[RMDB]
An RNA of 207 nucleotides, treated with 2A3 and read out base by base. The 2A3 profile rests on 1,960 reads. The RNA was probed in 150 mM KOAc, 10 mM MgCl2 and 150 mM bicine (pH 8.5) at 24 C.
RNA sequence: GGGAACGACUCGAGUAGAGUCGAAAAGUGAGACCACCUGGGUUUCUGCCAGGCCCUGCGGAAUCAAUGAUCUCCUGUCCCUCUGGAUCGGAGGCCCAUGGACACGAUCUCAAAGGAGAACGCGCCCAUGGCUUGCCAGGGGAACGCGCCAGGCCCGCCCGUAUAUAGUGUUCGCACUAUAUACGGGAAAAGAAACAACAACAACAAC
Reactivity to 2A3 in 0.01 (KOAc 150mM, MgCl2 10mM, bicine 150mM(pH8.5), 24C), signal-to-noise 2, nucleotides 027 to 156: g040u030g030a090g030a050c020c020a020c030c060u050g060g000g030u040u140u090c080u110g060c020c020a050g030g000c030c000c010u060g030c020g010g060a060a030u080c100a100a170u210g040a100u050c020u020c050c020u050g060u050c010c010c020u000c020u060g030g020a070u100c090g120g040a040g020g030c040c040c000a000u000g000g000a020c020a000c050g030a050u000c000u000c030a300a300a090g270g000a020g010a020a000c010g000c000g000c020c010c000a020u010g000g000c020u010u080g040c000c040a010g000g000g020g000a000a030c040g010c010g020c040c040a040g010g040c030c020c020g020
2A3 adducts were read by reverse transcription with SuperScript II with manganese. Source: RMDB library ARCHII, as collected in RNAgym.